[RMDB]
The record gives the reactivity of an RNA of 177 nucleotides to 2A3 and DMS. High DMS reactivity at an A or C suggests that its Watson-Crick edge is free. Source: RMDB libraries RFM100 and RFMREP, as collected in RNAgym.
RNA sequence: GGGAACGACUCGAGUAGAGUCGAAAACCGCCGUCUCGCAAACGGGCGCUGGCUUUAGGAAAGGAUGUUCCGUGGCCGUAAAUGCAGGUUCACAGCGCUUCGUAUCGCGGCAAUAUCGCCAGUGGUGUGUGCGAUAUUGGUUCGCCAAUAUCGCACAAAAAGAAACAACAACAACAAC
Reactivity to 2A3 in 0.01 (KOAc 150mM, MgCl2 10mM, bicine 150mM(pH8.5), 24C), signal-to-noise 7, nucleotides 027 to 126: c000c000g010c000c000g040u030c030u050c050g040c040a050a060a020c000g000g010g010c010g010c010u020g000g010c010u120u110u180a130g060g080a070a060a020g200g090a130u180g130u070u000c010c020g150u050g040g010c010c000g020u040a050a120a010u180g020c060a050g030g060u150u140c100a040c000a080g000c010g000c000u250u220c050g020u050a060u050c060g000c000g020g000c000a010a040u090a060u120c060g000c020c010a040g010u030g040g020u080g010
Reactivity to DMS in 0.01 (KOAc 150mM, MgCl2 10mM, bicine 150mM(pH8.5), 24C), signal-to-noise 5, nucleotides 027 to 126: c040c010g020c030c040g010u010c040u020c160g010c160a060a150a050c050g010g010g020c030g010c010u020g000g010c030u010u030u040a080g000g000a040a060a120g020g000a140u030g010u010u000c010c020g020u020g000g000c010c020g000u020a020a080a110u030g000c070a080g010g010u020u000c100a110c090a050g000c030g010c020u010u020c050g040u010a050u010c070g020c020g010g000c040a100a100u020a060u000c070g000c010c020a060g020u010g000g020u010g010